[RMDB]
About this RNA
The data come from the RNA Mapping Database (RMDB), libraries RFM100 and RFMREP. This 177-nucleotide RNA was probed chemically with DMS and 2A3. The 2A3 profile rests on 6,173 reads. Reactivities are rounded to 0.1 and cut off at 0 and 3. Reactivities are given for positions 27 through 126. DMS adducts were read by reverse transcription with MarathonRT.
RNA sequence: GGGAACGACUCGAGUAGAGUCGAAAACUCGGCCGGGACUGUUGUGGCGUGUGACAAGGUGCCUGGCCUUCUGCCAACCGACUAACCCACUAACCAGGCCCGAGCAUGCCCUACUAACCCCUCCCCGCUUAAAACGACCAUUCGUGGUCGUUUUAAGAAAAGAAACAACAACAACAAC
Reactivity to DMS in 0.01 (KOAc 150mM, MgCl2 10mM, bicine 150mM(pH8.5), 24C), signal-to-noise 4, nucleotides 027 to 126: c010u000c030g020g000c050c040g000g000g000a090c090u040g020u010u000g000u040g020g000c060g030u000g030u000g000a090c170a090a120g000g010u030g030c070c100u000g000g000c070c070u030u010c050u020g010c030c070a070a100c060c030g000a150c090u000a050a160c050c000c000a090c120u010a140a140c040c000a070g010g000c010c010c030g000a200g010c010a060u000g010c000c000c040u010a060c070u010a130a160c020c010c020c030u000c000c000c020c070g010
Reactivity to 2A3 in 0.01 (KOAc 150mM, MgCl2 10mM, bicine 150mM(pH8.5), 24C), signal-to-noise 6, nucleotides 027 to 126: c010u010c010g030g040c030c030g010g020g040a070c060u090g060u140u040g050u140g040g010c050g020u050g030u030g040a100c070a160a080g050g020u100g110c010c010u020g010g000c000c010u070u020c020u030g000c010c020a050a030c020c020g040a020c030u020a040a070c010c010c020a040c060u080a040a040c000c010a020g010g000c010c030c000g010a010g000c010a010u060g010c000c000c000u010a030c020u030a010a080c010c010c000c010u010c010c000c000c000g000